[RMDB]
RNA sequence: GGGAACGACUCGAGUAGAGUCGAAAAUCUGUUGACAAGUAAUCGUAAAGUCGAAGUCGGACUACGGUUGCGGCAACAGAAGUCAGAUUGCCUCAAGUCCGACUUGGACUUUUGUAAGAUCUGAUCACUACACGUUAGUAUUCGUACUGACGUGUAGAAAAGAAACAACAACAACAAC
Reactivity to DMS in 0.01 (KOAc 150mM, MgCl2 10mM, bicine 150mM(pH8.5), 24C), signal-to-noise 9, nucleotides 027 to 126: u010c020u000g010u010u000g010a070c100a090a090g010u000a080a060u000c020g010u000a020a030a020g010u000c000g010a040a040g000u000c030g000g000a020c010u000a110c210g010g010u010u000g020c180g000g000c000a010a020c050a110g010a100a110g010u010c130a080g010a160u000u000g000c080c000u000c040a080a040g000u000c000c000g000a040c050u000u000g000g000a010c000u000u000u000u000g010u010a080a140g000a050u000c030u000g000a100u000c100a150
Reactivity to 2A3 in 0.01 (KOAc 150mM, MgCl2 10mM, bicine 150mM(pH8.5), 24C), signal-to-noise 7, nucleotides 027 to 126: u010c000u020g030u040u070g030a020c040a100a040g030u030a070a040u040c030g020u020a020a020a010g000u000c070g060a020a000g020u020c010g000g000a000c010u040a030c060g100g000u050u040g010c000g000g000c000a000a010c010a030g090a060a000g050u000c020a020g020a260u000u020g000c000c000u020c030a020a010g000u000c000c000g000a020c000u010u030g020g000a000c000u010u010u010u010g050u030a040a020g000a040u000c010u020g030a070u050c020a010